RNA sequence: GGGAACGACUCGAGUAGAGUCGAAAAUAAUCAAGAUGAAUCGUUUUUAGUUUGCUUGCUUACCUUAUGGGCCAGGAUGAGAUCCACUUGAAUCUUUUUAUGUAGGCAGAUAGCGACGGAAUUUAAACACUGGGACCAUAUUCGUAUGGUCCCAGUGAAAAGAAACAACAACAACAAC
Reactivity to 2A3 in 0.01 (KOAc 150mM, MgCl2 10mM, bicine 150mM(pH8.5), 24C), signal-to-noise 3, nucleotides 027 to 126: u130a020a090u110c030a020a040g000a110u210g150a060a130u080c040g060u000u000u010u070u050a080g040u090u040u050g020c010u020u000g000c000u040u070a010c000c010u060u090a110u210g080g000g000c040c040a030g040g030a080u080g000a000g000a050u010c010c010a100c040u050u050g020a020a010u080c030u020u040u000u000u050a090u180g130u050a010g010g010c000a020g040a070u100a020g000c000g000a000c000g000g120a060a070u130u240u150a070a080a010
Reactivity to DMS in 0.01 (KOAc 150mM, MgCl2 10mM, bicine 150mM(pH8.5), 24C), signal-to-noise 2, nucleotides 027 to 126: u060a040a080u010c060a030a070g030a200u020g000a070a120u000c080g000u020u010u000u000u020a050g010u000u000u010g000c050u000u000g040c000u000u000a150c050c090u010u020a030u030g000g000g020c120c050a020g000g010a130u000g000a170g000a070u000c010c050a030c120u000u030g050a030a110u010c020u000u000u030u000u000a070u010g040u000a020g000g000c100a060g000a020u020a040g000c130g030a000c020g000g030a090a080u010u010u000a060a050a070